[RMDB]
The record gives the reactivity of an RNA of 177 nucleotides to DMS. Conditions: 150 mM KOAc, 10 mM MgCl2 and 150 mM bicine (pH 8.5), 24 C. Source: RMDB library TTRINS, as collected in RNAgym. Values cover nucleotides 27 to 126.
RNA sequence: GGGAACGACUCGAGUAGAGUCGAAAAGAUAUGGACGCAAACACGUACACUGCCUACGAGAGAUACCGCUGAUCGGAAACGAUCAUGUAUGGAAUGUAGGCUGUGUACGUGUUUGCGUCCUAAGUCAGGUAUUUAUCUGGUUCGCCAGAUAAAUACCAAAAGAAACAACAACAACAAC
Reactivity to DMS in 0.01 (KOAc 150mM, MgCl2 10mM, bicine 150mM(pH8.5), 24C), signal-to-noise 2, nucleotides 027 to 126: g000a050u010a300u000g000g030a000c000g030c000a000a000a010c000a010c000g030u000a020c000a020c000u000g010c010c000u000a000c000g020a130g000a300g010a010u000a000c000c000g010c010u010g000a000u000c000g010g010a070a090a100c000g000a010u000c000a000u010g000u000a000u010g020g000a190a150u010g010u000a000g000g010c010u000g000u000g000u000a000c010g010u000g010u000u000u000g000c000g010u000c000c000u000a000a060g020u000c050a130